[RMDB]
RNA sequence: GGGAACGACUCGAGUAGAGUCGAAAAGAUAUGGACGGGAUCGAUAAGCUACAUUCGGAAACGAAUGAAUAGCUUUUGACGAUCCAGUCCUAAGUCAAAGGUGUCUUGACUUCGGUCAAGACACCAACUAAGCUAGAUAGUUCGCUAUCUAGCUUAGAAAAGAAACAACAACAACAAC
Reactivity to DMS in 0.01 (KOAc 150mM, MgCl2 10mM, bicine 150mM(pH8.5), 24C), signal-to-noise 7, nucleotides 027 to 126: g010a010u000a050u010g000g000a010c000g010g000g000a000u000c000g020a060u010a020a010g020c010u000a070c000a010u000u000c000g010g000a020a010a040c000g010a010a010u000g000a170a150u000a010g010c000u000u000u000u020g010a300c020g000a000u000c000c000a020g000u000c000c000u000a000a060g000u000c010a060a120a140g010g010u000g000u000c000u000u000g000a020c000u000u020c230g030g000u000c000a000a010g000a000c000a000c000c000a010a040
Reactivity to 2A3 in 0.01 (KOAc 150mM, MgCl2 10mM, bicine 150mM(pH8.5), 24C), signal-to-noise 6, nucleotides 027 to 126: g000a010u030a010u060g000g000a000c020g010g010g000a000u010c010g030a060u060a300a020g000c000u010a010c010a010u000u010c000g010g020a010a010a010c010g020a000a010u040g010a040a220u100a030g000c000u030u040u030u090g020a010c000g000a000u010c000c000a000g000u000c000c000u000a010a010g010u010c050a160a060a050g000g010u000g000u000c000u000u000g000a010c010u070u120c300g030g000u010c000a000a010g000a000c000a000c000c000a000a000
Notes
Structure probing data (DMS and 2A3) for a 177-nucleotide construct. For DMS, 20,695 sequencing reads were counted. For DMS the reverse transcriptase was MarathonRT. Conditions: 150 mM KOAc, 10 mM MgCl2 and 150 mM bicine (pH 8.5), 24 C. For 2A3 the reverse transcriptase was SuperScript II with manganese. The 2A3 profile rests on 35,070 reads.